[RMDB]
RNA sequence: GGGAACGACUCGAGUAGAGUCGAAAAUUCCAUUUGAGUAUCCUGCAAACGGGCUUUUCAGCAUGGAACGUACAUAUUAAAUAGUAGGAGUGCAUAGUGGCCCGUAUAGCAGGCAUUAACAUUCCUGAAAACGUGAAAAGGUUCGCCUUUUCACGAAGUUAAAUAGUGUGUUCGCACACUAUUUAACAAAAGAAACAACAACAACAAC
Reactivity to DMS in 0.01 (KOAc 150mM, MgCl2 10mM, bicine 150mM(pH8.5), 24C), signal-to-noise 2, nucleotides 027 to 156: u010u000c000c010a220u000u030u000g000a090g010u000a070u000c020c000u010g000c050a090a140a180c040g000g050g040c040u000u000u000u000c020a300g060c030a060u000g020g040a100a110c020g010u010a120c080a170u000a150u000u000a060a100a300u010a120g040u000a060g010g020a170g040u000g000c050a090u010a150g040u000g000g010c000c020c030g000u000a050u010a150g040c020a030g000g000c060a030u000u010a080a080c060a110u000u000c020c010u000g000a060a040a100a090c020g030u000g000a020a000a010a000g000g010u000u000c300g040c030c000u000u000u000u000c000a020c000g020a000a040
Reactivity to 2A3 in 0.01 (KOAc 150mM, MgCl2 10mM, bicine 150mM(pH8.5), 24C), signal-to-noise 4, nucleotides 027 to 156: u040u020c010c010a050u170u060u100g070a050g020u060a070u140c010c000u010g000c000a090a000a000c000g000g000g040c000u110u140u130u160c080a010g000c010a010u020g020g120a210a030c010g080u040a000c010a040u130a080u190u300a140a130a140u170a060g050u020a000g010g120a050g010u010g000c010a050u050a220g070u070g030g000c000c010c000g000u000a000u020a010g010c000a000g000g000c000a000u000u010a010a010c000a020u050u090c000c000u040g060a080a060a050a060c000g000u010g000a010a010a000a010g020g010u020u040c100g080c020c000u010u000u000u000c010a000c000g000a000a000